RNA sequence: GGGAACGACUCGAGUAGAGUCGAAAAUAUUUUAUUAUUGACCUAUACCCACAAUAAGGAUACAAUGAGGACAACAUGACAGAUUCAGAUAUUUCAAUUAGAGUUCGCACAAACAGGGCACUGAAAACUAUGACACCAAUUUCGAUUGGUGUCAUAGAAAAGAAACAACAACAACAAC
Reactivity to DMS in 0.01 (KOAc 150mM, MgCl2 10mM, bicine 150mM(pH8.5), 24C), signal-to-noise 2, nucleotides 027 to 126: u000a040u000u000u010u020a070u020u000a060u020u000g010a160c030c060u010a070u010a080c020c000c010a120c090a020a060u010a090a090g010g010a080u020a080c040a050a060u040g010a110g000g000a080c080a040a050c040a060u000g040a080c060a020g000a080u000u000c060a040g000a080u000a040u000u010u010c080a020a080u000u020a060g000a140g000u000u030c050g050c050a050c210a030a020a080c090a050g030g000g010c060a080c070u010g010a050a030a090a200
Reactivity to 2A3 in 0.01 (KOAc 150mM, MgCl2 10mM, bicine 150mM(pH8.5), 24C), signal-to-noise 1, nucleotides 027 to 126: u030a000u030u220u040u100a300u090u020a040u010u160g010a040c000c000u000a020u080a150c000c000c050a030c030a060a090u150a140a080g060g000a030u020a180c120a110a000u120g010a060g050g050a050c000a030a010c000a020u080g100a020c000a030g040a030u030u050c010a000g020a100u030a090u130u150u070c040a030a080u080u100a030g030a000g050u120u110c040g030c060a100c080a070a000a000c060a040g030g000g070c040a000c000u000g060a000a000a020a070